Chemical mapping of a 177-nucleotide RNA with DMS and 2A3. For 2A3, 1,010 sequencing reads were counted. For DMS, 1,341 sequencing reads were counted. DMS adducts were read by reverse transcription with MarathonRT. Source: RMDB library 15KREP, as collected in RNAgym.
[RMDB]
RNA sequence: GGGAACGACUCGAGUAGAGUCGAAAAGUGUUAGACUUGCUUAAUAAGGGUAUGCAACUUUUGCAUACAAAGGUCUCCUGGGCUGGUUCUAAAAUCAUUGCUGUUAUCUACAGCGGCAGGGAGUCUCCUACUUGUCAACGUUCGCGUUGACAAGUAGAAAAGAAACAACAACAACAAC
Reactivity to DMS in 0.01 (KOAc 150mM, MgCl2 10mM, bicine 150mM(pH8.5), 24C), signal-to-noise 2, nucleotides 027 to 126: g000u020g010u000u020a020g000a070c050u010u010g020c050u000u000a040a170u030a210a160g010g000g010u000a000u000g000c010a020a170c300u000u000u010u010g010c010a010u000a000c000a050a060a120g000g000u000c030u010c030c020u000g000g000g010c060u000g000g010u000u000c080u000a060a060a060a130u000c050a060u010u000g020c010u000g020u000u000a100u000c200u010a080c080a020g010c000g000g000c050a160g010g000g010a070g010u010c050u020c080
Reactivity to 2A3 in 0.01 (KOAc 150mM, MgCl2 10mM, bicine 150mM(pH8.5), 24C), signal-to-noise 1, nucleotides 027 to 126: g090u070g030u040u060a020g000a030c040u060u020g010c030u080u060a110a010u120a090a190g070g020g000u000a000u010g000c010a090a180c090u160u110u220u050g010c000a020u000a020c000a010a070a000g030g000u000c000u040c000c010u030g000g070g080c020u000g000g050u080u080c040u050a080a040a010a160u100c070a060u060u130g000c000u020g020u080u040a100u140c040u050a020c010a010g000c010g010g000c030a030g010g030g020a000g040u000c000u000c010